Structure probing data (2A3) for a 207-nucleotide construct.
RNA sequence: GGGAACGACUCGAGUAGAGUCGAAAAUGAGUUGGACAAUAGAAAUCAAGUGAUCAAUGAAAUAAACUUAUGUUCAACAACUAUGCCUUCUUUAGGUAUUUGAACCUACAUUGUUUUCACUAAUAACUUAAGGUAUCUUCUUUUCCCACCAACUCCACACCGAUAAUGCCUUCGGGCAUUAUCGGUGAAAAGAAACAACAACAACAAC
Reactivity to 2A3 in 0.01 (KOAc 150mM, MgCl2 10mM, bicine 150mM(pH8.5), 24C), signal-to-noise 3, nucleotides 027 to 156: u080g000a030g010u040u000g030g020a050c050a170a110u090a130g080a070a100a060u140c130a220a020g020u000g050a000u020c030a010a020u050g060a120a080a090u290a070a120a060c100u160u120a040u100g000u030u000c000a000a000c000a020a040c160u120a080u140g000c000c020u070u090c060u060u300u220a040g000g000u020a070u020u020u050g000a000a000c030c020u020a040c070a020u000u000g090u110u080u010u000c010a020c050u040a090a100u100a170a010c040u170u080a070a020g020g000u090a100u030c050u030u090c000u010u190u060u040c000c000c000a020c000c000a010a010c000u000c000c020a040
Values cover nucleotides 27 to 156. The 2A3 profile rests on 942 reads. The reactions ran in a buffer of 150 mM KOAc, 10 mM MgCl2 and 150 mM bicine (pH 8.5), at 24 C.